Chemical mapping of a 177-nucleotide RNA with 2A3 and DMS. Values are in units of 0.01, from 0 to 300, in steps of 10. High 2A3 reactivity points to a flexible backbone, as in loops and unpaired stretches. For DMS the reverse transcriptase was MarathonRT. Conditions: 150 mM KOAc, 10 mM MgCl2 and 150 mM bicine (pH 8.5), 24 C. Source: RMDB library OK2TST, as collected in RNAgym.

RNA sequence: GGGAACGACUCGAGUAGAGUCGAAAAAUUACAGGCACCUGCCACCAUGCCUGGCUAAAUUUUGUAUUUUUAGUAGAGAUGGUGUUUUACCUUGUUGGCCAGACUGGUCUUGAACUCCUGACCUCAGCUUGAUAACGAGAUUCGUCUCGUUAUCAAGAAAAGAAACAACAACAACAAC
Reactivity to 2A3 in 0.01 (KOAc 150mM, MgCl2 10mM, bicine 150mM(pH8.5), 24C), signal-to-noise 2, nucleotides 027 to 126: a000u120u060a050c010a020g010g000c040a040c050c060u110g090c030c010a000c000c020a000u050g060c000c010u000g000g000c020u050a050a060a090u110u150u080u100g110u080a180u010u130u010u090u060a080g030u030a000g020a030g000a060u060g030g050u010g070u020u010u130u040a020c010c000u040u110g030u060u100g090g000c010c000a010g020a070c040u040g000g000u020c030u000u050g010a040a010c030u030c020c010u030g040a070c000c020u040c010a030g010
Reactivity to DMS in 0.01 (KOAc 150mM, MgCl2 10mM, bicine 150mM(pH8.5), 24C), signal-to-noise 4, nucleotides 027 to 126: a080u010u010a100c040a020g000g000c070a060c090c070u010g010c120c030a030c040c050a080u000g000c010c010u000g000g000c040u000a010a030a050u000u000u000u020g010u010a050u000u000u000u000u000a050g010u000a080g010a080g010a050u010g000g010u000g000u010u000u010u000a070c060c040u000u010g000u000u000g010g000c020c030a040g010a070c080u000g010g000u000c050u000u010g000a050a060c070u010c040c020u000g000a120c050c030u000c070a080g000